[RMDB]
RNA sequence: GGGAACGACUCGAGUAGAGUCGAAAAUCAUGAUAUCGGUGAGGCAUUGGGCUGCGGAGCUCAUAUGGCUGAGCUUAGAAGAACUAGGGUAGGUCCAUUCGAUGAGCGAAACAAUGACCUUGUAAACAAUGGAGCAGGAGUUCGCUCCUGCUCCAUUAAAAGAAACAACAACAACAAC
Reactivity to DMS in 0.01 (KOAc 150mM, MgCl2 10mM, bicine 150mM(pH8.5), 24C), signal-to-noise 1, nucleotides 027 to 126: u000c090a080u000g010a080u000a050u000c030g010g000u000g000a120g000g120c000a030u030u000g000g000g000c030u000g000c150g060g000a300g070c000u000c010a010u050a080u000g000g030c060u000g030a110g050c000u000u020a010g000a300a190g020a020a190c150u000a000g000g010g000u000a200g000g040u050c000c060a020u000u030c120g000a030u020g010a080g000c010g010a060a220a060c110a010a000u070g000a070c000c030u000u000g010u000a150a050a170c030
Reactivity to 2A3 in 0.01 (KOAc 150mM, MgCl2 10mM, bicine 150mM(pH8.5), 24C), signal-to-noise 1, nucleotides 027 to 126: u000c030a000u000g030a020u020a000u270c060g060g000u190g000a050g010g200c130a080u080u000g000g030g000c060u100g120c060g000g090a030g130c000u000c000a040u030a010u050g230g000c000u000g000a000g000c000u000u000a030g150a140a000g000a080a080c000u000a000g000g250g060u080a000g160g000u060c000c000a010u290u150c080g090a080u000g050a000g000c000g000a000a010a010c130a010a050u100g000a060c020c000u000u030g090u070a140a160a000c150
The record gives the reactivity of an RNA of 177 nucleotides to DMS and 2A3. It was measured as part of the RMDB library OK1LIB. The RNA was probed in 150 mM KOAc, 10 mM MgCl2 and 150 mM bicine (pH 8.5) at 24 C. For 2A3 the reverse transcriptase was SuperScript II with manganese. The 2A3 profile rests on 440 reads.